Chemical mapping of a 177-nucleotide RNA with DMS and 2A3. Source: RMDB library M2PK90, as collected in RNAgym. For 2A3, 4,667 sequencing reads were counted. Conditions: 150 mM KOAc, 10 mM MgCl2 and 150 mM bicine (pH 8.5), 24 C. For DMS the reverse transcriptase was MarathonRT. For 2A3 the reverse transcriptase was SuperScript II with manganese.
RNA sequence: GGGAACGACUCGAGUAGAGUCGAAAAUUAAAGAGGGUAGCACACACUCAGACUAAGUCUGACACACACAUACGCUAAUCAUCUCUGUGUGUGUUCGAGAUAUCGAUAAGUGUAUGAGAUGAAAAAACCUAACUGAUCAGUUCGCUGAUCAGUUAGGAAAAGAAACAACAACAACAAC
Reactivity to DMS in 0.01 (KOAc 150mM, MgCl2 10mM, bicine 150mM(pH8.5), 24C), signal-to-noise 4, nucleotides 027 to 126: u000u000a050a090a120g010a050g000g010g020u010a040g000c050a090c120a040c010a050c030u000c010a010g010a040c030u000a110a180g020u000c000u000g020a090c030a020c010a000c000a030c030a080u000a060c170g010c100u000a070a100u000c010a020u000c000u000c020u000g020u000g030u010g020u000g010u000u000c060g020a040g000a150u020a060u000c020g020a070u010a050a060g020u010g010u000a070u000g010a010g010a010u000g010a000a060a060a060a050a110
Reactivity to 2A3 in 0.01 (KOAc 150mM, MgCl2 10mM, bicine 150mM(pH8.5), 24C), signal-to-noise 3, nucleotides 027 to 126: u080u050a040a070a020g120a030g010g050g010u040a020g060c020a020c000a010c000a010c070u020c010a000g010a010c050u200a260a050g030u000c000u000g010a000c010a000c000a000c000a000c000a010u110a120c080g030c130u110a140a040u010c010a010u000c000u000c010u010g000u000g000u000g000u010g000u020u010c010g020a010g000a070u160a060u140c030g000a020u020a160a020g020u010g010u040a030u060g010a010g010a000u000g000a140a020a000a000a010a020